[RMDB]
RNA sequence: GGGAACGACUCGAGUAGAGUCGAAAACAACUAUCUGAUGCAAGAACAGCUCAAAGGGGCGAGCAGUACCGAGGGCUACAUCAGAGCGCUGUUAAAGAGCUGCCGCUGCGUGGAGCUGGACUGCUGGACGGAAACCCCAAUUCGUUGGGGUUUCCGUAAAAGAAACAACAACAACAAC
Reactivity to 2A3 in 0.01 (KOAc 150mM, MgCl2 10mM, bicine 150mM(pH8.5), 24C), signal-to-noise 2, nucleotides 027 to 126: c020a010a000c050u300a140u150c000u060g140a060u080g010c010a000a020g040a110a000c030a040g000c000u000c040a230a250a000g020g040g000g030c050g000a090g010c000a000g000u000a100c110c170g080a030g010g060g020c000u080a120c060a170u230c060a020g130a040g070c100g000c100u010g000u140u230a040a040a020g140a060g020c020u030g000c000c000g000c000u070g130c000g040u080g070g020a000g000c040u000g000g030a000c010u000g000c000u030g040g000